[RMDB]
RNA sequence: GGGAACGACUCGAGUAGAGUCGAAAACACACCCUUCGACCCGCGGGUCUCCGAAUGGGCGAACCCGCCAGGAGAUGUCCUGGCAUCCCCCUUGGGAACUCAUACCUUGGGGGAGGACAACCCGGGGACCCUCCCACGGAUUCGUCCGUGGGAGGGUAAAAGAAACAACAACAACAAC
Reactivity to 2A3 in 0.01 (KOAc 150mM, MgCl2 10mM, bicine 150mM(pH8.5), 24C), signal-to-noise 1, nucleotides 027 to 126: c070a030c000a040c050c000c000u180u150c040g010a090c000c000c000g150c030g070g040g000u000c000u120c000c000g030a100a120u180g070g010g010c080g020a100a160c000c000c100g000c020c000a000g060g000a010g020a170u120g170u040c000c000u030g000g040c020a000u140c000c020c000c000c000u000u000g080g020g030a100a030c080u120c160a060u130a260c000c000u000u000g000g000g010g000g000a000g000g000a000c010a010a070c010c050c050g000g000g000g050

The record gives the reactivity of an RNA of 177 nucleotides to 2A3. The reactions ran in a buffer of 150 mM KOAc, 10 mM MgCl2 and 150 mM bicine (pH 8.5), at 24 C. For 2A3 the reverse transcriptase was SuperScript II with manganese. The 2A3 profile rests on 457 reads.